[RMDB]
RNA sequence: GGGAACGACUCGAGUAGAGUCGAAAAUUUACUAGGAUCCUGAUCCUGUAGUUUUAUGGAACAUGACGCACAUUUCACUUUCACAAUCACAGAACAGGAAAACUGACGUACGCCUCGAAGAGCAUGACAGUGAGUGAGCAUUCGUGCUCACUCACUGAAAAGAAACAACAACAACAAC
Reactivity to 2A3 in 0.01 (KOAc 150mM, MgCl2 10mM, bicine 150mM(pH8.5), 24C), signal-to-noise 3, nucleotides 027 to 126: u050u030u020a040c090u050a010g000g040a020u050c060c050u100g010a080u020c000c010u090g060u020a120g010u070u000u060u110a140u110g050g010a090a050c050a070u110g110a080c050g040c060a070c050a160u030u100u040c010a050c010u030u050u080c020a050c020a010a050u100c000a020c030a050g020a110a000c020a010g020g000a070a060a080a010c020u010g010a060c020g050u100a030c080g040c000c000u010c010g010a100a060g050a000g040c090a030u080g030a060
Reactivity to DMS in 0.01 (KOAc 150mM, MgCl2 10mM, bicine 150mM(pH8.5), 24C), signal-to-noise 2, nucleotides 027 to 126: u000u030u000a050c080u000a010g020g000a030u000c070c110u030g000a070u010c000c030u000g010u000a040g000u000u030u000u000a090u010g000g020a110a050c140a160u000g060a030c060g000c000a110c140a020u000u000u060c000a010c240u000u000u030c010a050c180a070a050u000c010a080c090a060g000a060a090c030a010g000g000a020a080a080a010c090u000g080a080c150g000u010a040c090g010c040c000u030c010g030a000a080g000a030g050c030a010u000g000a140